[RMDB]
RNA sequence: GGGAACGACUCGAGUAGAGUCGAAAAGAAGUAGAGUCUAAGAAUAAAUGUUUUUGAGGGUGAGAGAAACUUGAGCACAUUUCUAGGCUAAAGGAGAAGAUGAUGAGUAGAGCAAGGUCCUGGAGUUGAUGGUGGAAGGACAGAGUCAAGAGUGGGGGUUUAUCGUCUGGUUCGCCAGACGAUAAACAAAAGAAACAACAACAACAAC
Reactivity to 2A3 in 0.01 (KOAc 150mM, MgCl2 10mM, bicine 150mM(pH8.5), 24C), signal-to-noise 1, nucleotides 027 to 156: g040a030a010g010u070a020g030a000g040u000c070u100a070a030g040a010a080u150a100a070a070u100g080u050u030u100u070u100g030a050g000g080g000u020g030a010g000a010g000a080a000a000c010u030u060g010a030g050c020a020c020a110u130u140u020c070u080a030g000g080c020u060a110a000a040g070g000a060g030a070a000g030a020u050g010a000u030g030a020g030u090a010g000a000g000c060a100a000g000g010u040c010c020u080g050g000a020g000u000u070g070a040u110g000g020u040g000g000a010a010g020g000a000c000a030g030a000g030u040c040a000a090g050a010g020u010g010g000g010g020
Source: RMDB library OK3TST, as collected in RNAgym. Structure probing data (2A3) for a 207-nucleotide construct. The 2A3 profile rests on 553 reads. Values cover nucleotides 27 to 156.